[RMDB]
RNA sequence: GGGAACGACUCGAGUAGAGUCGAAAACAUUGGGAUCAUCAUCAUAAUGACGAGACAGUGUCUGAGAGAGGAAGCUUGUAUGGUGGUGGGGACGAUAACCGAUGGGAAGUAGGAUCAGACGCCGGUUCAAAUGCCAGUGGGCGUGGAAGGCCAAUGCAACAGUGCUAGUUUUCGAACUAGCACUGUUAAAAGAAACAACAACAACAAC
Reactivity to DMS in 0.01 (KOAc 150mM, MgCl2 10mM, bicine 150mM(pH8.5), 24C), signal-to-noise 1, nucleotides 027 to 156: c020a120u030u000g020g020g010a170u000c040a060u010c040a080u000c100a090u010a220a120u010g000a050c000g000a070g010a070c070a110g030u010g000u000c010u010g000a110g000a130g020a080g020g020a090a190g060c090u000u000g030u000a040u000g000g020u020g020g020u000g000g010g020g020a110c030g060a070u020a050a120c050c000g010a110u000g020g010g000a030a070g020u000a070g010g000a050u000c030a140g030a100c050g030c030c010g030g000u020u000c000a100a090a130u030g030c010c020a090g010u010g010g000g000c030g000u000g010g010a060a050g010g030c010c020a080a050u000g000c040
Reactivity to 2A3 in 0.01 (KOAc 150mM, MgCl2 10mM, bicine 150mM(pH8.5), 24C), signal-to-noise 3, nucleotides 027 to 156: c040a060u060u130g070g000g040a060u040c010a000u000c000a000u000c000a050u140a280a090u250g040a010c020g010a020g030a030c020a030g030u030g060u110c050u100g030a040g000a010g010a020g090g000a080a000g040c040u100u080g070u090a080u070g030g000u030g030g020u060g000g020g010g020a010c020g020a020u050a110a050c040c020g030a090u060g020g000g020a050a040g020u080a060g000g040a030u040c040a020g030a100c040g010c050c010g050g020u000u000c100a150a060a030u090g010c020c000a030g100u130g050g030g020c040g010u020g020g000a050a000g040g000c040c020a050a080u140g020c010
Conditions: 150 mM KOAc, 10 mM MgCl2 and 150 mM bicine (pH 8.5), 24 C. Chemical mapping of a 207-nucleotide RNA with DMS and 2A3. Reactivities are given for positions 27 through 156. DMS adducts were read by reverse transcription with MarathonRT. For DMS, 2,094 sequencing reads were counted. 2A3 adducts were read by reverse transcription with SuperScript II with manganese. It was measured as part of the RMDB library OK3TST.